[RMDB]
RNA sequence: GGGAACGACUCGAGUAGAGUCGAAAACUAUACAGACGACCUGUAAAUGUUUUUCGAGUAUCUUCAUUCUUCCCUCAUCCUACUGAUGUUUUAGAGAGGAAGAUACUCAGCAAAACAUUUACUGGUUACUUGUAUAGAAAACGGGCCUUCGGGCCCGACUCGUAAAUUUCUUCGGAAAUUUACGAGUAAAAGAAACAACAACAACAAC
Reactivity to 2A3 in 0.01 (KOAc 150mM, MgCl2 10mM, bicine 150mM(pH8.5), 24C), signal-to-noise 2, nucleotides 027 to 156: c000u000a010u000a000c000a020g140a120c040g000a000c020c000u020g000u000a000a000a020u000g000u010u010u010u010u050c030g000a000g000u000a000u000c000u020u010c010a220u040u050c060u100u100c030c020c010u000c000a000u040c000c090u140a240c100u170g030a030u010g060u040u070u090u180a030g010a000g000a000g030g010a010a000g000a000u000a000c000u000c000a000g000c010a000a000a000a000c000a000u000u000u000a000c000u010g000g000u010u010a000c000u030u020g000u000a020u000a000g020a030a090a000a010c010g020g000g010c040c000u080u120c170g080g010g010c000c000c000g010
Conditions: 150 mM KOAc, 10 mM MgCl2 and 150 mM bicine (pH 8.5), 24 C. The record gives the reactivity of an RNA of 207 nucleotides to 2A3. It was measured as part of the RMDB library RFM130. For 2A3, 1,392 sequencing reads were counted.